[RMDB]
This 177-nucleotide RNA was probed chemically with 2A3 and DMS. For 2A3 the reverse transcriptase was SuperScript II with manganese. DMS adducts were read by reverse transcription with MarathonRT.

RNA sequence: GGGAACGACUCGAGUAGAGUCGAAAAGGAGAUCGAAGACGACCGACGUCAGCACGGUCAGGAUGUAGGUCCGCAUGCAUCCCAGUUGACGAAACUUGACGAUUUCCAAAGCGGACAAGAAGUCAAAAUAAUAGCAGGUCUUCGGACCUGCUAUUAUAAAAGAAACAACAACAACAAC
Reactivity to 2A3 in 0.01 (KOAc 150mM, MgCl2 10mM, bicine 150mM(pH8.5), 24C), signal-to-noise 1, nucleotides 027 to 126: g020g000a020g000a050u040c040g070a090a100g170a120c140g000a020c000c050g070a100c060g110u200c070a010g020c150a010c050g030g020u010c000a000g000g030a020u000g000u000a000g000g040u020c000c000g020c000a000u000g000c000a000u000c000c000c000a010g010u010u000g010a080c100g050a020a040a210c070u030u040g030a040c050g020a040u010u000u000c000c000a000a070a000g000c010g020g000a000c020a000a060g110a060a000g050u090c080a180a050a000
Reactivity to DMS in 0.01 (KOAc 150mM, MgCl2 10mM, bicine 150mM(pH8.5), 24C), signal-to-noise 3, nucleotides 027 to 126: g010g020a000g020a040u000c010g000a150a040g030a170c190g010a070c050c000g000a090c060g000u040c150a070g010c100a110c000g000g000u020c050a170g010g010a000u000g030u000a010g000g000u010c020c010g000c020a060u040g010c020a040u000c000c000c070a050g010u020u000g020a170c200g010a120a040a030c030u010u010g020a150c000g000a040u000u020u000c030c000a040a110a070g030c000g040g010a000c000a120a170g020a080a120g010u010c110a070a080a080

As a SHAPE reagent, 2A3 marks flexible, mostly unpaired nucleotides at the ribose 2'-OH.